[RMDB]
RNA sequence: GGGAACGACUCGAGUAGAGUCGAAAAGAUAUGGAACGCUCGAAGAGCGAUGAAAUAUGGCUAAGCUGUACACUCGGAAACGAGUGUACAGUAUGCCAUAUGGAGCUCUAAGAGCGUUCCUAAGUCAGGUAUAUACAGGGUUCGCCCUGUAUAUACCAAAAGAAACAACAACAACAAC
Reactivity to DMS in 0.01 (KOAc 150mM, MgCl2 10mM, bicine 150mM(pH8.5), 24C), signal-to-noise 3, nucleotides 027 to 126: g000a080u000a260u000g010g000a000a010c010g030c000u020c000g030a300a060g030a010g030c000g010a080u020g000a100a140a000u000a000u000g000g010c000u010a200a180g000c000u030g020u000a010c000a000c010u000c010g000g000a050a070a150c010g000a000g020u010g020u000a010c000a010g020u000a050u000g010c000c010a000u010a000u000g010g000a020g000c000u010c010u020a060a300g000a010g000c000g010u000u000c000c000u000a010a090g000u000c040a120
Reactivity to 2A3 in 0.01 (KOAc 150mM, MgCl2 10mM, bicine 150mM(pH8.5), 24C), signal-to-noise 1, nucleotides 027 to 126: g010a010u010a010u090g020g000a000a000c020g020c020u010c040g130a160a090g000a020g020c030g070a110u020g010a020a020a010u010a000u000g020g070c060u250a300a300g000c000u040g000u000a000c010a000c000u010c000g020g010a000a080a010c010g000a000g000u000g020u000a000c010a010g000u000a000u000g020c000c000a000u000a000u010g010g000a010g000c000u030c000u040a000a000g000a000g010c000g000u000u000c000c000u000a000a000g010u020c020a020
The record gives the reactivity of an RNA of 177 nucleotides to DMS and 2A3. For DMS, 2,711 sequencing reads were counted. The reactions ran in a buffer of 150 mM KOAc, 10 mM MgCl2 and 150 mM bicine (pH 8.5), at 24 C. For 2A3, 4,055 sequencing reads were counted.